[RMDB]
RNA sequence: GGGAACGACUCGAGUAGAGUCGAAAAUCCGACUCUCAUAGGCUCUCCAACCCAACCCCUACUCAAUACGUCCUCGUCGUACAGAACGGUAACAUGUUUUCCGAACAUCCGCGCUUGGGUAUACGAGAAAGGCGUAGAUUAUUCGUAAUCUACGCAAGAUGUAAGAGUGAUUCGUCACUCUUACAUCAAAAGAAACAACAACAACAAC
Reactivity to 2A3 in 0.01 (KOAc 150mM, MgCl2 10mM, bicine 150mM(pH8.5), 24C), signal-to-noise 6, nucleotides 027 to 156: u060c030c000g020a030c020u030c000u010c030a080u080a130g050g000c020u000c010u000c050c020a070a070c020c010c000a010a040c020c000c000c020u040a070c030u040c060a070a090u070a120c030g040u030c030c020u000c010g050u020c010g000u030a040c020a080g070a120a010c020g020g020u080a090a040c040a120u110g070u030u010u050u040c030c020g000a010a020c020a060u030c010c020g050c020g000c050u030u050g020g000g040u070a050u020a090c030g010a000g040a120a050a010g120g000c000g000u000a000g000a000u000u020a030u040u040c050g030u020a000a000u000c000u000a000c000g000c010a000a010
Reactivity to DMS in 0.01 (KOAc 150mM, MgCl2 10mM, bicine 150mM(pH8.5), 24C), signal-to-noise 3, nucleotides 027 to 156: u000c020c000g000a050c020u000c030u000c020a100u010a130g020g000c010u000c010u000c020c050a050a100c030c010c030a090a210c020c010c010c020u010a090c030u000c070a080a120u010a100c020g010u000c020c010u000c060g030u000c070g050u000a120c070a080g010a040a120c020g010g020u000a080a120c100a100u010g010u010u000u000u000c070c050g000a070a070c040a110u000c050c010g000c050g010c050u010u000g050g000g010u000a090u000a010c040g030a090g000a040a060a120g000g000c010g070u000a010g000a020u010u000a050u000u000c240g050u000a020a010u000c000u000a000c000g000c000a020a030
An RNA of 207 nucleotides, treated with 2A3 and DMS and read out base by base. The RNA was probed in 150 mM KOAc, 10 mM MgCl2 and 150 mM bicine (pH 8.5) at 24 C. The DMS profile rests on 6,468 reads. High 2A3 reactivity points to a flexible backbone, as in loops and unpaired stretches. Reactivities are given for positions 27 through 156.